[RMDB]
RNA sequence: GGGAACGACUCGAGUAGAGUCGAAAAGACGUUAUCUUCGGAUAACGUCAAAGAACGCUCAGCAGCUAAUAAAAAGCUGCGGAAGAGAGCGACAAAACCAAAAAAUCCGUUUCUUCGGAAACGGAAAUCAAGUAGAUGUGUUCGCACAUCUACUUGAAAAAGAAACAACAACAACAAC
Reactivity to 2A3 in 0.01 (KOAc 150mM, MgCl2 10mM, bicine 150mM(pH8.5), 24C), signal-to-noise 2, nucleotides 027 to 126: g010a000c000g000u000u000a000u000c020u040u060c170g050g000a000u010a000a000c000g010u000c000a010a010a000g010a050a030c020g020c010u010c010a010g000c000a000g020c010u030a060a020u060a210a300a050a040a010g000c000u000g000c000g000g010a090a010g190a000g010a000g010c000g000a000c030a010a090a010a030c020c020a010a000a050a010a010a060u030c010c000g000u000u000u000c010u030u060c250g070g000a000a000a000c010g010g000a010a010a040
Reactivity to DMS in 0.01 (KOAc 150mM, MgCl2 10mM, bicine 150mM(pH8.5), 24C), signal-to-noise 2, nucleotides 027 to 126: g010a010c000g000u000u000a000u000c000u000u030c300g030g010a000u000a020a010c000g000u000c000a010a110a130g010a190a030c010g010c010u000c010a190g000c010a010g010c010u000a100a110u000a090a090a090a130a020g010c010u000g000c010g000g010a110a170g000a190g010a000g020c000g000a120c100a020a110a090a140c020c030a010a020a060a100a150a090u000c000c000g000u000u000u000c000u000u030c180g010g000a000a000a010c010g040g000a000a010a060
This 177-nucleotide RNA was probed chemically with 2A3 and DMS. Conditions: 150 mM KOAc, 10 mM MgCl2 and 150 mM bicine (pH 8.5), 24 C. For DMS the reverse transcriptase was MarathonRT. It was measured as part of the RMDB library M2PK50. For 2A3, 3,695 sequencing reads were counted. 2A3 adducts were read by reverse transcription with SuperScript II with manganese.